The data come from the RNA Mapping Database (RMDB), library RNAMAK. An RNA of 207 nucleotides, treated with 2A3 and read out base by base. The reactions ran in a buffer of 150 mM KOAc, 10 mM MgCl2 and 150 mM bicine (pH 8.5), at 24 C.
RNA sequence: GGGAACGACUCGAGUAGAGUCGAAAACCGGAUGUUCGCAUCCGGAAAAAAUCCUAAGUCUCGCGACGAUCGCAGUGUAGGCGAAGAACUAUCGGAAACGAUAGGGAGCCUAUUGCGGGAGCGAGAUAUGGAAAAAACCCCAUGUUCGCAUGGGGAAGUAGUAGUUCUCGUUCGCGAGAACUACUACAAAAGAAACAACAACAACAAC
Reactivity to 2A3 in 0.01 (KOAc 150mM, MgCl2 10mM, bicine 150mM(pH8.5), 24C), signal-to-noise 1, nucleotides 027 to 156: c000c000g020g000a000u000g020u080u140c300g020c110a000u000c000c000g000g000a110a020a000a000a000a070u050c030c010u030a140a040g000u000c000u010c000g020c000g130a300c020g010a070u010c000g000c020a060g020u080g110u300a020g010g000c020g060a220a050g020a040a030c000u000a000u000c000g020g070a170a080a030c020g000a010u000a000g000g000g020a000g000c010c000u000a000u010u090g020c000g000g020g000a000g000c010g000a000g000a000u010a000u010g020g000a050a040a000a030a030a060c030c020c020c010a000u020g030u040u040c230g000c140a000u000g000g000g000g000a030a000

Source information:
For 2A3 the reverse transcriptase was SuperScript II with manganese.